[RMDB]
RNA sequence: GGGAACGACUCGAGUAGAGUCGAAAAAAUUUAGAUUAUCCAGGUGUAGCGGUGAAAUUCGUAGAGAUCUGGUGGAUAAUGAACCGGUGGCGAAGGCGAAAGAUAACCGGUGAAAUGCUGAAGUGAAAUUACACAUAUUAUUCGUAAUAUGUGUAAUAAAAGAAACAACAACAACAAC
Reactivity to DMS in 0.01 (KOAc 150mM, MgCl2 10mM, bicine 150mM(pH8.5), 24C), signal-to-noise 9, nucleotides 027 to 126: a050a040u010u000u000a080g010a110u010u000a040u000c010c010a050g010g010u000g020u000a160g010c020g020g010u010g000a080a080a110u000u000c030g020u000a100g010a130g010a040u000c020u000g010g020u000g010g000a060u010a040a040u000g010a120a050c020c020g000g010u000g000g000c060g000a090a080g000g010c030g010a070a080a080g000a110u000a110a040c020c010g000g000u000g000a060a060a050u010g010c050u000g010a050a090g010u000g000a060a070
Reactivity to 2A3 in 0.01 (KOAc 150mM, MgCl2 10mM, bicine 150mM(pH8.5), 24C), signal-to-noise 3, nucleotides 027 to 126: a000a010u190u140u060a060g000a040u040u050a010u070c010c000a010g060g000u040g040u070a030g020c000g000g010u030g070a110a070a110u100u040c020g030u030a020g010a020g010a210u000c010u020g010g080u050g060g030a030u020a110a050u080g020a030a020c010c010g000g030u020g050g000c060g040a050a020g090g020c060g040a120a040a020g070a020u090a050a040c000c000g010g000u000g010a050a050a010u090g000c030u040g040a070a020g070u080g070a110a090
Conditions: 150 mM KOAc, 10 mM MgCl2 and 150 mM bicine (pH 8.5), 24 C. The record gives the reactivity of an RNA of 177 nucleotides to DMS and 2A3. For 2A3 the reverse transcriptase was SuperScript II with manganese. It was measured as part of the RMDB library M2PK90. For DMS the reverse transcriptase was MarathonRT.